[RMDB]
RNA sequence: GGGAACGACUCGAGUAGAGUCGAAAAGAUAUGGAUCGAAACGCUCAUCGAUCAACAUAUACAGAUAAGUAUAUCGGAAACGAUAUACGAUACUGUAUAUGUUGGGAGAGCUAUCGAUCCUAAGUCACGUACCAAAAAUCUUCGGAUUUUUGGUACGAAAAGAAACAACAACAACAAC
Reactivity to DMS in 0.01 (KOAc 150mM, MgCl2 10mM, bicine 150mM(pH8.5), 24C), signal-to-noise 1, nucleotides 027 to 126: g000a070u000a300u010g000g000a000u000c000g010a030a100a200c260g010c010u000c010a230u000c280g010a110u000c000a000a000c000a010u000a000u000a000c000a010g000a030u000a170a300g000u000a000u000a000u010c010g020g000a140a120a210c010g000a000u000a000u000a000c000g000a080u010a030c000u000g020u000a000u010a000u000g000u010u000g000g010g020a030g020a000g000c000u010a270u000c020g010a000u000c030c000u000a000a090g000u000c030a210
Reactivity to 2A3 in 0.01 (KOAc 150mM, MgCl2 10mM, bicine 150mM(pH8.5), 24C), signal-to-noise 1, nucleotides 027 to 126: g070a010u110a020u200g000g000a000u010c020g010a000a140a040c240g050c000u020c000a300u300c170g140a120u070c010a020a000c000a000u000a000u000a000c000a000g050a060u100a110a050g020u000a000u000a000u010c010g060g030a060a080a130c010g010a010u000a000u010a010c000g000a010u080a010c000u010g020u010a000u000a010u000g000u010u000g000g020g000a120g000a000g030c010u030a010u050c000g000a000u060c000c000u010a110a010g070u000c020a010
An RNA of 177 nucleotides, treated with DMS and 2A3 and read out base by base. The reactions ran in a buffer of 150 mM KOAc, 10 mM MgCl2 and 150 mM bicine (pH 8.5), at 24 C. The data come from the RNA Mapping Database (RMDB), library TTRINS. For 2A3 the reverse transcriptase was SuperScript II with manganese. For 2A3, 2,540 sequencing reads were counted. Reactivities are given for positions 27 through 126. Values are in units of 0.01, from 0 to 300, in steps of 10.